[RMDB]
RNA sequence: GGGAACGACUCGAGUAGAGUCGAAAAGAUAUGGACUACUCGGUCUUUGGACCGAAGAACUCGGAAACGAGGGAGGUCGACCGAGGUAGUCCUAAGUCAAAGAUGAAUUACUUCGGUAAUUCAUCAACAAUAACGCAACGUUCGCGUUGCGUUAUUGAAAAGAAACAACAACAACAAC
Reactivity to 2A3 in 0.01 (KOAc 150mM, MgCl2 10mM, bicine 150mM(pH8.5), 24C), signal-to-noise 2, nucleotides 027 to 126: g000a010u060a070u150g000g000a010c010u000a010c010u000c010g040g010u020c000u120u250u200g160g000a000c000c060g070a110a040g010a010a010c000u010c000g010g010a070a050a060c010g000a020g000g010g030a020g000g020u030c040g000a000c000c000g000a030g000g070u020a010g000u000c000c000u000a070a000g020u020c060a110a070a150g000a000u010g000a000a000u000u010a020c000u020u080c180g070g000u000a000a010u000u000c010a010u000c000a000a020
Reactivity to DMS in 0.01 (KOAc 150mM, MgCl2 10mM, bicine 150mM(pH8.5), 24C), signal-to-noise 4, nucleotides 027 to 126: g000a060u000a300u000g010g000a010c000u000a030c000u000c000g010g000u000c010u000u020u040g040g010a020c000c000g000a050a100g010a170a160c000u000c010g000g010a140a070a230c010g020a030g000g000g000a080g000g020u000c000g000a010c020c000g010a020g020g010u010a000g020u010c000c000u000a030a060g000u010c060a100a150a130g010a010u000g000a020a010u000u000a000c000u000u010c200g010g010u000a000a000u000u000c000a010u000c020a080a130